Chemical mapping of a 177-nucleotide RNA with DMS. Values are in units of 0.01, from 0 to 300, in steps of 10. Values cover nucleotides 27 to 126. Conditions: 150 mM KOAc, 10 mM MgCl2 and 150 mM bicine (pH 8.5), 24 C. The data come from the RNA Mapping Database (RMDB), library M2PK90.

RNA sequence: GGGAACGACUCGAGUAGAGUCGAAAAUUGUGGUCAAGACCUUGGCGUAGUAUCCAAGGUUGUCAAGGUUCCUAUUGACUUAACAAUGAAUGAGUUUAUGUUAUGGUGUAAGGAUGGACAGGGGAAAUAUUCCAGAUCCGUUCGCGGAUCUGGAAUAAAAAGAAACAACAACAACAAC
Reactivity to DMS in 0.01 (KOAc 150mM, MgCl2 10mM, bicine 150mM(pH8.5), 24C), signal-to-noise 1, nucleotides 027 to 126: u000u000g070u000g000g000u000c030a040a060g000a020c000c020u000u020g000g010c210g020u000a130g020u000a090u000c040c040a050a030g000g000u000u000g020u010c060a100a060g020g000u000u000c060c100u000a090u020u020g000a020c000u000u010a050a020c020a030a040u040g000a100a070u040g000a100g010u000u010u000a050u000g010u000u010a080u000g000g010u000g000u000a060a030g000g000a050u000g000g000a070c080a100g000g020g010g010a100a060a150